RNA sequence: GGGAACGACUCGAGUAGAGUCGAAAAUUUAAGAGCGUAGAUCUCUCUGUCACGAUACGAGUAAGUGACUCUCGUGUACUACUGACGAAUGAGACAGAGACAUUUAUGCUCAGUGUCAGUCAAGGAAGAGUCAACGAUGAUUCGUCAUCGUUGACUCAAAAGAAACAACAACAACAAC
Reactivity to DMS in 0.01 (KOAc 150mM, MgCl2 10mM, bicine 150mM(pH8.5), 24C), signal-to-noise 2, nucleotides 027 to 126: u010u010u010a070a110g020a050g030c020g060u000a000g000a000u000c160u000c000u000c000u010g000u010c000a120c120g000a090u000a070c000g020a070g000u000a060a060g030u000g000a090c070u000c220u010c200g030u010g030u000a050c030u000a080c010u000g010a140c110g020a120a040u000g020a130g000a010c000a000g030a030g010a030c060a010u010u000u000a020u010g010c010u000c000a060g000u010g000u000c060a060g000u000c050a070a090g000g000a110a080
Reactivity to 2A3 in 0.01 (KOAc 150mM, MgCl2 10mM, bicine 150mM(pH8.5), 24C), signal-to-noise 2, nucleotides 027 to 126: u160u160u090a180a010g000a000g000c010g010u010a000g000a070u000c000u000c010u000c020u060g000u000c000a010c050g030a020u030a100c000g020a000g000u050a100a160g040u090g210a040c000u020c030u000c080g140u110g020u070a050c000u000a010c020u090g200a060c050g080a090a090u120g010a030g000a100c000a010g020a010g010a000c000a000u000u030u000a000u030g020c000u010c000a020g000u010g050u060c100a060g040u030c030a070a080g080g070a130a200